[RMDB]
RNA sequence: GGGAACGACUCGAGUAGAGUCGAAAAAGAACUUUGUGGUUCACUCACACUUACAUACAAGCAAAUUUAUGAAGUUGUAGCAUCACUUUGCAAUUCUGUUUUUACGAUUGUAAACUACAAGCCAACAUUUGUGGUUCCAGACAAUCGUGUUAAAGACUCUUCAUGUGCACUUCGGUGCACAUGAAGAAAAAGAAACAACAACAACAAC
Reactivity to 2A3 in 0.01 (KOAc 150mM, MgCl2 10mM, bicine 150mM(pH8.5), 24C), signal-to-noise 1, nucleotides 027 to 156: a030g030a060a000c020u170u010u090g000u030g020g050u170u200c090a060c030u100c000a050c000a000c040u060u180a120c030a060u070a000c100a080a010g000c020a060a270a300u080u190u000a000u050g020a060a010g060u120u080g040u090a000g050c000a020u030c100a040c020u040u050u050g010c080a090a080u010u220c040u100g020u060u050u000u100u130a020c030g000a000u000u040g000u040a030a020a030c000u030a000c030a020a030g060c110c140a070a040c100a300u000u030u050g010u030g030g020u040u050c090c000a060g000a190c000a000a010u000c000g010u000g010u020u200a110a030a000g040a010c010
This 207-nucleotide RNA was probed chemically with 2A3.
The RNA was probed in 150 mM KOAc, 10 mM MgCl2 and 150 mM bicine (pH 8.5) at 24 C.
Values cover nucleotides 27 to 156.